The record gives the reactivity of an RNA of 177 nucleotides to 2A3 and DMS. In probing experiments dimethyl sulfate is read out at A N1 and C N3, which are open when not base-paired. For DMS the reverse transcriptase was MarathonRT. Conditions: 150 mM KOAc, 10 mM MgCl2 and 150 mM bicine (pH 8.5), 24 C.
RNA sequence: GGGAACGACUCGAGUAGAGUCGAAAACCUUGGUGGUGUGCGGUUAGUUUGCGUGGAGCGCGUCGUUGAGUUCGACUGCUUGGGUUUUCCACGCGGUUGCUUCGAUGGCACCGCUGAUGGAGUUGCAGGUAAAUACCUCAUUCGUGAGGUAUUUACCAAAAGAAACAACAACAACAAC
Reactivity to 2A3 in 0.01 (KOAc 150mM, MgCl2 10mM, bicine 150mM(pH8.5), 24C), signal-to-noise 3, nucleotides 027 to 126: c010c000u030u090g060g000u040g000g050u070g020u050g040c020g010g010u110u170a050g010u060u150u200g020c030g040u060g000g030a060g040c110g000c030g010u010c020g000u030u080g130a180g130u030u050c030g010a020c010u060g050c040u060u100g070g090g000u080u060u080u020c000c010a020c020g000c000g000g010u080u170g000c000u050u150c120g060a150u260g040g000c000a000c000c010g000c050u060g050a120u120g040g050a080g050u160u140g060c080a050
Reactivity to DMS in 0.01 (KOAc 150mM, MgCl2 10mM, bicine 150mM(pH8.5), 24C), signal-to-noise 4, nucleotides 027 to 126: c020c000u000u000g010g030u000g000g010u000g010u000g010c020g020g010u000u010a060g020u000u010u000g020c040g040u010g010g010a080g020c100g010c060g020u000c040g040u010u000g010a160g010u000u000c020g000a030c020u000g010c010u000u020g010g010g020u000u000u000u000c000c000a040c030g010c010g000g000u010u010g010c020u000u000c200g010a160u020g010g010c000a030c010c010g020c010u010g010a070u000g010g000a120g010u010u010g010c130a160

The 2A3 profile rests on 2,182 reads. For DMS, 11,721 sequencing reads were counted. Reactivities are given for positions 27 through 126. As a SHAPE reagent, 2A3 marks flexible, mostly unpaired nucleotides at the ribose 2'-OH.